[RMDB]
RNA sequence: GGGAACGACUCGAGUAGAGUCGAAAACUAAAGAACUUGAAGAAAUGCGAGCUGUAGCCACCACUUUAGGGUAUCGCGGAGGCUAUGAUCGCCGGUACCGCUAUCUUUCUCCCGAGGAGAUAGAAGCGUGAAGUUAAAUCUUCGGAUUUAACUUCACAAAAGAAACAACAACAACAAC
Reactivity to 2A3 in 0.01 (KOAc 150mM, MgCl2 10mM, bicine 150mM(pH8.5), 24C), signal-to-noise 3, nucleotides 027 to 126: c030u090a050a070a110g070a090a080c110u180u190g100a060a020g070a100a260a050u110g030c010g020a020g010c140u050g040u030a000g020c000c010a000c010c000a030c050u130u060u120a150g010g020g160u120a080u150c070g000c020g070g020a020g020g010c000u020a050u100g030a030u020c010g000c010c020g060g040u060a050c050c020g010c010u040a130u100c000u010u060u010c010u010c000c020c060g110a100g030g010a020g010a010u020a020g030a030a000g060c050
Reactivity to DMS in 0.01 (KOAc 150mM, MgCl2 10mM, bicine 150mM(pH8.5), 24C), signal-to-noise 3, nucleotides 027 to 126: c060u010a040a090a140g010a130a080c120u000u000g010a080a110g010a110a080a090u000g010c030g010a030g030c130u000g010u010a010g000c020c020a100c020c030a080c020u000u000u020a070g020g010g010u010a010u010c120g010c070g000g000a080g020g000c020u000a030u000g010a050u000c030g000c000c110g010g000u000a060c120c040g000c000u020a050u000c000u000u000u000c020u000c000c010c130g010a180g000g010a020g000a010u000a030g000a080a090g000c100